[RMDB]
This 170-nucleotide RNA was probed chemically with DMS and 2A3. DMS adducts were read by reverse transcription with MarathonRT.
RNA sequence: GGGAACGACUCGAGUAGAGUCGAAAAAGCGGUUUGUGUCUUUGGCUAUAGAUGCUUACCCUCUCACAAAGCAUGAAGAUAUAGAAUACCAGAAUGUAUUCUGGGUCUACUUACAGUAUAUAGAAAAAAGCUCUCACGUUCGCGUGAGAGAAAAGAAACAACAACAACAAC
Reactivity to DMS in 0.01 (KOAc 150mM, MgCl2 10mM, bicine 150mM(pH8.5), 24C), signal-to-noise 5, nucleotides 027 to 129: a040g040c230g010g020u000u000u000g050u020g030u040c000u030u030u040g010g030c070u090a110u030a060g020a040u090g000c020u010u040a080c070c030c020u050c010u090c000a160c180a040a100a040g020c050a040u000g010a120a080g000a070u020a090u000a020g020a070a040u030a110c000c130a050g020a020a000u120g050u070a000u000u010c010u020g030g000g020u030c020u060a060c080u090u040a040c060a070g060u050a100u030a130u080a090g120a020a050a060a010a110a090g080
Reactivity to 2A3 in 0.01 (KOAc 150mM, MgCl2 10mM, bicine 150mM(pH8.5), 24C), signal-to-noise 6, nucleotides 027 to 129: a000g080c120g000g020u000u010u010g000u010g020u010c020u050u050u090g060g020c020u020a010u090a110g010a010u020g000c000u010u010a010c010c010c000u000c010u010c000a070c020a040a120a020g080c030a050u070g030a040a010g050a000u110a000u040a180g040a070a020u050a230c010c010a040g000a060a030u080g060u270a170u030u020c000u000g000g000g000u000c000u000a050c010u110u060a030c010a000g090u040a030u050a030u050a210g170a030a120a020a000a000a010g010